[RMDB]
RNA sequence: GGGAACGACUCGAGUAGAGUCGAAAAUAAAAUACUGCAAAGCAGAAAUAGUACAGUCAACAUGGAGUGUAGAAACAUGUAAAAGAAUAAACUGCAAAGAUACGCAGAGUAUCAGAAGACAAAAAAACAUUGAUCCAUAGUUCGCUAUGGAUCAAUGAAAAGAAACAACAACAACAAC
Reactivity to 2A3 in 0.01 (KOAc 150mM, MgCl2 10mM, bicine 150mM(pH8.5), 24C), signal-to-noise 1, nucleotides 027 to 126: u080a000a020a000a060u170a130c050u020g000c020a050a000a300g010c010a000g100a120a190a090u080a050g060u060a010c000a060g020u030c010a050a020c000a040u060g020g070a090g090u070g020u080a020g070a060a080a000c020a010u020g050u170a000a060a000a060g030a030a040u100a030a060a000c010u010g010c000a040a090a000g110a010u100a040c020g030c050a000g110a020g300u010a000u000c010a050g070a100a010g090a000c120a000a190a020a000a000a020a020
Reactivity to DMS in 0.01 (KOAc 150mM, MgCl2 10mM, bicine 150mM(pH8.5), 24C), signal-to-noise 2, nucleotides 027 to 126: u000a080a050a120a060u000a070c050u000g000c060a050a070a220g010c010a020g010a070a090a180u000a050g010u010a100c040a030g000u000c050a040a070c030a010u010g000g000a080g010u010g010u030a050g010a170a040a060c020a020u000g010u000a040a030a070a030g000a060a160u000a050a110a080c020u000g000c030a050a080a090g010a000u000a000c020g020c170a130g000a110g000u000a000u000c000a100g030a070a110g000a070c050a000a020a080a030a040a050a110

Record summary:
Chemical mapping of a 177-nucleotide RNA with 2A3 and DMS. High DMS reactivity at an A or C suggests that its Watson-Crick edge is free. For DMS, 1,023 sequencing reads were counted. It was measured as part of the RMDB library M2PK90. DMS adducts were read by reverse transcription with MarathonRT. The reactions ran in a buffer of 150 mM KOAc, 10 mM MgCl2 and 150 mM bicine (pH 8.5), at 24 C.